[RMDB]
RNA sequence: GGGAACGACUCGAGUAGAGUCGAAAACUAGACGGGUUCGCCCGUCUAGAAACGGAGCGAAUAGGGGGCUUCGCCUCCGGCCCAGCCCUACCGCUGACCCCCAAAGCUCAACCUUCGGGUUGAGCAAGACAAAUUGGUUGUUCGCAACCAAUUUGUCAAAAGAAACAACAACAACAAC
Reactivity to 2A3 in 0.01 (KOAc 150mM, MgCl2 10mM, bicine 150mM(pH8.5), 24C), signal-to-noise 1, nucleotides 027 to 126: c010u000a000g000a000c000g020g010g070u010u090c180g130c050c000c000g000u000c000u010a000g000a000a000a000c010g010g000a000g060c000g040a030a070u230a300g010g000g040g000g010c030u030u000c010g000c020c040u000c000c030g010g000c000c000c010a070g000c030c020c000u080a100c060c050g050c170u150g220a300c020c020c000c000c050a090a050a000g000c000u010c000a000a000c000c010u000u070c160g020g040g000u010u010g000a000g020c000a000a000
Reactivity to DMS in 0.01 (KOAc 150mM, MgCl2 10mM, bicine 150mM(pH8.5), 24C), signal-to-noise 2, nucleotides 027 to 126: c010u000a030g010a050c000g010g000g020u000u020c240g030c020c010c000g020u010c000u010a010g030a080a090a180c030g030g020a060g000c020g000a020a040u020a090g000g010g000g010g000c300u000u010c020g010c090c000u000c040c010g010g010c060c050c040a150g010c070c040c070u000a130c150c060g010c080u000g010a220c010c000c000c000c010a140a030a140g000c000u000c000a040a020c000c010u010u010c190g020g020g020u000u000g000a030g010c000a010a000